About this RNA:
Chemical mapping of a 177-nucleotide RNA with 2A3 and DMS. Values cover nucleotides 27 to 126. The data come from the RNA Mapping Database (RMDB), library TTRDES. As a SHAPE reagent, 2A3 marks flexible, mostly unpaired nucleotides at the ribose 2'-OH. For DMS the reverse transcriptase was MarathonRT.

RNA sequence: GGGAACGACUCGAGUAGAGUCGAAAAGAUAUGGAGCCACCCAGGAGCUUUGAUCAUGUUGGAUCGGAAACGAUCCACCAUGGGAGCUCCGGUGGCUCCUAAGUCAAAGGUCUGGUUCGCCAGACCACUAAUGGCCUAUCUUCGGAUAGGCCAUUAGAAAAGAAACAACAACAACAAC
Reactivity to 2A3 in 0.01 (KOAc 150mM, MgCl2 10mM, bicine 150mM(pH8.5), 24C), signal-to-noise 1, nucleotides 027 to 126: g000a000u050a040u200g010g020a030g000c040c030a050c100c170c300a190g080g000a000g000c040u300u250u220g080a100u240c000a000u000g010u000u000g000g020a000u020c000g000g000a110a130a070c010g000a000u010c000c000a000c000c000a000u010g000g000g000a020g000c000u010c010c010g000g000u000g000g030c000u000c000c000u000a000a000g000u000c010a050a140a090g000g000u000c000u010g060g000u060u150c190g040c060c000a000g010a010c000c000a010
Reactivity to DMS in 0.01 (KOAc 150mM, MgCl2 10mM, bicine 150mM(pH8.5), 24C), signal-to-noise 2, nucleotides 027 to 126: g000a030u020a300u010g010g000a030g030c010c000a010c010c030c230a260g060g020a010g030c000u000u000u020g010a080u020c000a010u000g000u000u010g020g010a030u000c020g010g000a120a130a260c000g000a010u000c000c000a000c020c000a000u000g010g000g000a010g000c000u000c000c020g000g040u000g000g010c000u000c000c010u010a000a070g020u000c030a100a140a130g020g010u000c000u000g000g000u000u020c300g010c010c010a020g010a010c000c000a040